[RMDB]
RNA sequence: GGGAACGACUCGAGUAGAGUCGAAAAGGGAUAAGAGAGUACUCUUAUCCCCACGUCGUUGGUGACAACGACGAUUAUCAGGUGGCCACCCGCCCGCGCCACCGUUACUCCACUCCACUCCUUCGGGACUGGUUUGGAGGAACCUAACAGGCCUAAAUAAUACGAUCCAUUUCGAUGGAUCGUAUUAAAAAGAAACAACAACAACAAC
Reactivity to 2A3 in 0.01 (KOAc 150mM, MgCl2 10mM, bicine 150mM(pH8.5), 24C), signal-to-noise 1, nucleotides 027 to 156: g030g000g000a000u000a010a000g000a000g040a080g170u280a280c010u010c000u000u000a000u010c000c000c000c010a060c020g010u000c000g010u010u000g010g080u080g050a090c000a010a000c000g000a000c000g000a010u150u110a050u200c100a050g000g000u010g010g000c050c030a050c070c110c000g120c000c020c030g000c020g020c000c000a000c000c020g000u000u100a000c000u000c010c000a000c000u000c000c000a010c000u000c010c000u020u060c230g050g000g000a010c010u000g010g000u000u000u010g000g000a010g000g000a010a000c000c030u080a130a070c050a090g080g000c000c040u140a170a150a050
Reactivity to DMS in 0.01 (KOAc 150mM, MgCl2 10mM, bicine 150mM(pH8.5), 24C), signal-to-noise 1, nucleotides 027 to 156: g010g030g000a030u000a020a000g000a040g010a300g010u010a130c030u000c010u020u030a000u000c000c010c000c000a030c020g040u000c020g070u010u030g000g010u000g000a230c040a010a020c020g030a000c010g020a090u000u000a130u030c100a110g000g020u000g010g000c010c030a140c050c000c120g110c000c030c060g000c160g000c020c000a050c050c000g040u000u000a030c000u000c000c010a040c010u000c010c000a070c030u000c000c000u020u020c300g040g010g010a040c050u010g020g020u020u010u000g030g030a050g000g000a020a040c000c080u000a160a060c080a040g050g030c040c090u000a030a050a140